[RMDB]
RNA sequence: GGGAACGACUCGAGUAGAGUCGAAAAGCUUCGAAGAUCUCUCUAUUCUCCAGAAAGGAGGAAGGAGCUCUCGAACGCCCCCCCGACCCUCGGAUGGGCCGCUUCCGGCAGGGAAGCCCGAAGGUGGUAAGGAGACGGUUCGCCGUCUCCAAAAGAAACAACAACAACAAC
Reactivity to DMS in 0.01 (KOAc 150mM, MgCl2 10mM, bicine 150mM(pH8.5), 24C), signal-to-noise 5, nucleotides 027 to 129: g000c030u030u040c020g020a010a000g000a040u000c000u040c000u060c000u080a150u050u020c020u000c010c010a230g050a180a180a170g050g010a000g000g030a040a050g000g000a020g040c090u010c000u000c010g040a000a000c100g030c010c020c000c030c020c060c000g010a110c020c010c060u020c070g020g020a060u030g000g000g000c050c050g020c080u030u010c000c000g020g050c180a130g040g000g030a070a080g020c090c000c050g010a070a040g020g060u000g000g050u030a020a080
Reactivity to 2A3 in 0.01 (KOAc 150mM, MgCl2 10mM, bicine 150mM(pH8.5), 24C), signal-to-noise 5, nucleotides 027 to 129: g020c030u000u000c010g040a150a040g010a010u010c010u000c010u000c010u040a300u130u000c000u010c000c000a100g240a300a240a100g060g000a010g000g010a000a020g010g000a000g000c010u000c000u010c000g000a010a010c090g010c000c000c000c000c000c000c000g030a040c010c020c000u020c010g070g010a060u040g070g040g000c040c000g040c000u010u010c010c000g100g020c040a040g110g010g030a020a010g010c030c000c000g030a030a030g020g020u030g010g020u070a100a080